Chemical mapping of a 177-nucleotide RNA with 2A3 and DMS. DMS adducts were read by reverse transcription with MarathonRT.

[RMDB]
RNA sequence: GGGAACGACUCGAGUAGAGUCGAAAAAGGGAAGUCUACCUCUAAUAGAAACUGACAGGUAGGAGUAAGGUUGGUGGACGAAACUUUGGAGAGAAUGUAAUUAAUACAUCACCAACGAGGAUACAACAAACAUACCGGGAUUCGUCCCGGUAUGUUUAAAAGAAACAACAACAACAAC
Reactivity to 2A3 in 0.01 (KOAc 150mM, MgCl2 10mM, bicine 150mM(pH8.5), 24C), signal-to-noise 3, nucleotides 027 to 126: a000g050g000g020a010a010g040u000c020u020a000c040c000u000c010u030a080a150u150a120g300a140a210a150c070u050g070a050c100a060g020g020u050a010g000g040a020g040u040a100a070g090g010u020u090g050g040u040g010g010a040c030g060a020a020a020c060u040u060u080g010g030a060g010a050g050a110a080u060g000u050a030a040u000u190a050a050u060a040c030a000u070c000a020c000c000a000a040c010g040a040g030g020a030u040a080c040a090a000c020
Reactivity to DMS in 0.01 (KOAc 150mM, MgCl2 10mM, bicine 150mM(pH8.5), 24C), signal-to-noise 5, nucleotides 027 to 126: a040g010g010g000a240a130g010u000c020u000a020c000c010u020c040u000a130a100u070a130g010a220a090a100c140u010g010a110c300a040g000g000u010a030g000g010a100g020u010a040a070g000g010u010u000g010g010u000g010g000a020c040g010a080a150a100c030u000u000u000g020g010a110g020a100g010a080a060u010g000u010a040a120u040u030a120a100u020a010c030a030u000c020a060c010c010a030a010c070g010a050g000g000a140u030a030c090a100a070c130